[RMDB]
RNA sequence: GGGAACGACUCGAGUAGAGUCGAAAACGUGCCGCAGCUGCACCACAUUGCGGUUCCAGCGGUUCGUGGUGAUCUUGGUCUUGUGCGGCGUCUCCUUGAGCGCGCGCUGCCCGUUCUCGCUGUUCACGUCCAUCUCGAUGACGUGGUCGCGGCUCAGAACGUAGAUCGAGUUCGCUCGAUCUACGUUAAAAGAAACAACAACAACAAC
Reactivity to 2A3 in 0.01 (KOAc 150mM, MgCl2 10mM, bicine 150mM(pH8.5), 24C), signal-to-noise 1, nucleotides 027 to 156: c030g030u060g010c000c000g000c020a010g000c000u010g050c030a020c000c100a050c030a100u060u240g020c030g060g000u070u060c060c020a070g040c010g060g000u090u120c000g030u070g000g040u070g010a050u020c100u100u240g040g030u020c080u170u190g050u070g010c050g030g000c010g030u090c010u010c010c130u070u190g020a020g000c130g000c000g000c010g000c090u050g020c030c000c040g000u030u030c150u030c030g010c040u080g070u080u080c040a020c010g060u000c100c070a120u080c050u050c180g130a090u110g020a010c000g010u030g000g010u010c070g020c010g000g010c000u000c050a000g040
The record gives the reactivity of an RNA of 207 nucleotides to 2A3. It was measured as part of the RMDB library OK3TST. The 2A3 profile rests on 931 reads.